Source: RMDB library OK1LIB, as collected in RNAgym.
This 177-nucleotide RNA was probed chemically with 2A3.
The 2A3 profile rests on 583 reads.
Reactivities are given for positions 27 through 126.
RNA sequence: GGGAACGACUCGAGUAGAGUCGAAAAACAACAAAAUAAUGUACCUUGAUGGAGUGCCUCUCCGCGGGAGAUUGAAGGUUAUCAGUAGACUGUUCGCUAACGCAAAUGACGGCAUAUGUACAUUAAGCGCCGAGUUAUCUUUCGAGAUAACUCGGCGAAAAGAAACAACAACAACAAC
Reactivity to 2A3 in 0.01 (KOAc 150mM, MgCl2 10mM, bicine 150mM(pH8.5), 24C), signal-to-noise 1, nucleotides 027 to 126: a000c030a050a000c000a000a020a000a120u160a000a030u020g000u000a010c020c110u010u140g060a040u020g180g040a250g040u020g000c000c000u000c000u000c000c030g000c020g080g000g000a030g000a000u080u250g130a000a000g010g090u090u000a180u190c030a000g080u030a110g100a000c010u000g120u150u000c000g000c010u000a010a010c000g000c000a000a000a060u090g030a000c300g000g000c000a000u020a120u120g000u070a000c000a000u030u060a000a000g150